[RMDB]
RNA sequence: GGGAACGACUCGAGUAGAGUCGAAAAGCCAUGCCUGCGCGCAGCCCGGUGAACGGGCCCGGACCGCAGCCCACCACGACGGCGUCCAGGUCGGCCAUUGUGAGCGCGGCAUCGGCAAGCGCAGCCAGUAAAUACUCGGUUUCGACCGAGUAUUUACAAAAGAAACAACAACAACAAC
Reactivity to 2A3 in 0.01 (KOAc 150mM, MgCl2 10mM, bicine 150mM(pH8.5), 24C), signal-to-noise 2, nucleotides 027 to 126: g020c000c000a030u050g020c030c030u080g000c010g000c020g000c010a010g000c010c000c030g030g030u160g140a300a060c010g010g010g000c000c010c000g020g000a030c010c030g010c050a090g000c000c000c000a050c010c020a040c050g080a000c030g050g050c020g060u110c070c040a090g080g000u000c010g020g030c050c000a080u080u110g020u020g070a040g020c000g000c000g000g000c000a090u020c010g010g000c060a080a020g010c030g020c030a030g040c020c020a000
Reactivity to DMS in 0.01 (KOAc 150mM, MgCl2 10mM, bicine 150mM(pH8.5), 24C), signal-to-noise 3, nucleotides 027 to 126: g030c020c010a100u010g000c250c000u010g030c020g010c010g010c130a120g030c070c070c000g000g000u010g010a100a170c030g000g000g020c010c020c030g010g010a100c040c040g010c030a100g000c000c020c070a110c130c190a080c120g000a040c040g010g020c030g000u000c090c120a090g000g010u010c030g000g020c040c040a120u000u000g030u000g000a070g000c000g010c010g010g010c040a020u000c080g000g000c100a050a070g010c040g010c050a050g000c060c060a150
About this RNA: This 177-nucleotide RNA was probed chemically with 2A3 and DMS. Values cover nucleotides 27 to 126. The RNA was probed in 150 mM KOAc, 10 mM MgCl2 and 150 mM bicine (pH 8.5) at 24 C. Source: RMDB library OK2TST, as collected in RNAgym.